[RMDB]
RNA sequence: GGGAACGACUCGAGUAGAGUCGAAAAAGUCUCCUUCUAGAGGAAGGAAAAGAAGUAUGCCGCUUCUCUCUAUCCACAGAAUCGCCUCCAGAUUUUCCGUACAUGCAUGCAUCUUCUUAGAGAACAAAGAAUCAUUGAUAUUCGUAUCAAUGAUUCUAAAAGAAACAACAACAACAAC
Reactivity to 2A3 in 0.01 (KOAc 150mM, MgCl2 10mM, bicine 150mM(pH8.5), 24C), signal-to-noise 4, nucleotides 027 to 126: a010g060u030c020u000c030c000u000u010c030u060a130g020a060g200g060a020a030g030g000a020a120a010a020g030a020a010g040u070a050u090g050c030c030g020c050u050u000c020u010c000u000c010u020a070u080c040c020a050c020a070g100a090a110u060c050g010c030c000u010c030c000a010g010a080u050u040u030u050c020c000g010u050a040c010a070u070g050c010a010u060g020c000a040u020c010u070u000c010u030u070a080g030a010g030a140a020c030a060a150
Reactivity to DMS in 0.01 (KOAc 150mM, MgCl2 10mM, bicine 150mM(pH8.5), 24C), signal-to-noise 7, nucleotides 027 to 126: a110g010u000c090u000c000c010u000u000c020u010a160g010a150g010g010a030a130g010g000a040a030a080a070g010a050a060g020u010a050u000g020c050c160g010c040u000u000c030u000c070u000c050u010a080u000c040c040a070c110a100g000a090a080u000c070g000c030c010u000c020c030a100g000a090u000u000u000u000c030c020g010u000a050c130a050u000g020c050a070u000g000c040a050u000c020u000u000c030u000u000a090g010a120g000a070a070c170a050a100
The record gives the reactivity of an RNA of 177 nucleotides to 2A3 and DMS. As a SHAPE reagent, 2A3 marks flexible, mostly unpaired nucleotides at the ribose 2'-OH. The reactions ran in a buffer of 150 mM KOAc, 10 mM MgCl2 and 150 mM bicine (pH 8.5), at 24 C.